Source: RMDB libraries RFM100 and RFMREP, as collected in RNAgym. An RNA of 177 nucleotides, treated with DMS and 2A3 and read out base by base. High 2A3 reactivity points to a flexible backbone, as in loops and unpaired stretches.
[RMDB]
RNA sequence: GGGAACGACUCGAGUAGAGUCGAAAAACGUGCACUACGGUGCACGAGUGCAGAUCCUUGGGAGCCCUGUUAGACUCUGGAUUUUACACUUGGAGUGAACGGGCGCCAUCCCGAGGCUUUGCACAAAUUGUAUAUACGAUUUCGAUCGUAUAUACAAAAAAGAAACAACAACAACAAC
Reactivity to DMS in 0.01 (KOAc 150mM, MgCl2 10mM, bicine 150mM(pH8.5), 24C), signal-to-noise 9, nucleotides 027 to 126: a120c010g010u000g010c000a010c000u000a100c180g030g010u000g000c010a000c010g000a060g010u000g010c010a010g000a000u000c000c000u000u010g000g010g010a120g000c010c000c000u000g000u000u000a090g010a030c000u000c000u000g000g000a120u020u020u020u030a140c270a090c080u010u010g010g000a020g010u000g000a030a020c010g000g010g010c150g020c060c110a130u010c000c000c000g010a010g000g000c100u000u000u000g000c000a010c010a030a040a080
Reactivity to 2A3 in 0.01 (KOAc 150mM, MgCl2 10mM, bicine 150mM(pH8.5), 24C), signal-to-noise 9, nucleotides 027 to 126: a000c000g000u000g000c000a000c000u040a030c260g110g000u000g000c000a000c000g000a030g000u000g000c000a000g000a020u010c000c000u010u000g020g010g010a060g030c000c010c000u020g020u010u020a110g070a070c000u000c010u020g080g040a140u110u090u120u300a110c150a040c060u090u220g020g000a000g000u020g040a010a000c000g010g010g000c050g000c010c020a100u030c000c000c000g000a000g000g000c000u000u000u000g000c010a000c000a000a040a000